Source: RMDB library TTRDEL, as collected in RNAgym. Chemical mapping of a 177-nucleotide RNA with DMS.
RNA sequence: GGGAACGACUCGAGUAGAGUCGAAAAGAUAUGGAUCCGUGCCCAGCGAUGAAAUCGGAAACGAUGGAGCUGGCACGGGAUCCUAAGUCAAAACAAAGCUCGGAGAGUUCGCUCUCCGAGCUUUGAACUAAUCGUCAUUCUUCGGAAUGACGAUUAGAAAAGAAACAACAACAACAAC
Reactivity to DMS in 0.01 (KOAc 150mM, MgCl2 10mM, bicine 150mM(pH8.5), 24C), signal-to-noise 1, nucleotides 027 to 126: g000a000u000a300u000g000g000a000u000c000c000g000u000g000c150c020c020a010g020c000g000a100u020g020a040a120a010u000c010g000g010a160a110a220c010g000a010u000g000g000a100g000c000u000g000g010c000a010c000g020g000g010a010u000c010c000u020a030a140g010u000c050a100a090a130a230c000a020a010a000g010c000u000c000g000g000a030g010a020g030u000u000c290g010c020u000c000u000c000c000g000a010g010c000u000u000u000g000a050a300
DMS adducts were read by reverse transcription with MarathonRT. The RNA was probed in 150 mM KOAc, 10 mM MgCl2 and 150 mM bicine (pH 8.5) at 24 C. Reactivities are given for positions 27 through 126.